Background
An RNA of 177 nucleotides, treated with DMS and 2A3 and read out base by base. The 2A3 profile rests on 3,222 reads. The reactions ran in a buffer of 150 mM KOAc, 10 mM MgCl2 and 150 mM bicine (pH 8.5), at 24 C.

[RMDB]
RNA sequence: GGGAACGACUCGAGUAGAGUCGAAAAGAUAUGGAAUCCCGGUAGGGAGCUGGUCGGAAACGACCCAGCAUCGAUCUACGGAUUCCUAAGUCAAACCCGUGACAACGGUUCGCCGUUGUCACGGGAACACUAUACGCUCGUUCGCGAGCGUAUAGUGAAAAGAAACAACAACAACAAC
Reactivity to DMS in 0.01 (KOAc 150mM, MgCl2 10mM, bicine 150mM(pH8.5), 24C), signal-to-noise 2, nucleotides 027 to 126: g000a040u020a300u010g000g000a030a010u010c060c050c300g060g020u010a010g000g000g010a040g010c000u000g000g000u000c010g010g000a080a090a150c010g000a010c150c020c070a000g010c000a170u000c100g000a070u000c010u000a050c050g000g010a000u000u000c000c000u000a010a150g000u010c050a100a070a140c020c010c000g000u000g010a010c020a020a000c000g000g010u000u010c250g010c000c000g020u000u000g000u010c000a000c010g000g020g000a010a010
Reactivity to 2A3 in 0.01 (KOAc 150mM, MgCl2 10mM, bicine 150mM(pH8.5), 24C), signal-to-noise 2, nucleotides 027 to 126: g000a030u060a050u120g010g040a010a010u060c110c220c160g190g060u030a030g000g140g030a020g000c020u000g020g010u000c000g020g010a040a040a050c010g000a030c060c130c020a000g000c010a110u290c030g140a160u100c010u010a000c000g000g010a000u000u000c010c000u030a130a020g020u010c030a030a030a220c020c040c010g040u000g010a020c000a020a000c000g040g210u130u160c300g010c100c000g000u010u020g010u020c000a010c000g010g000g000a000a000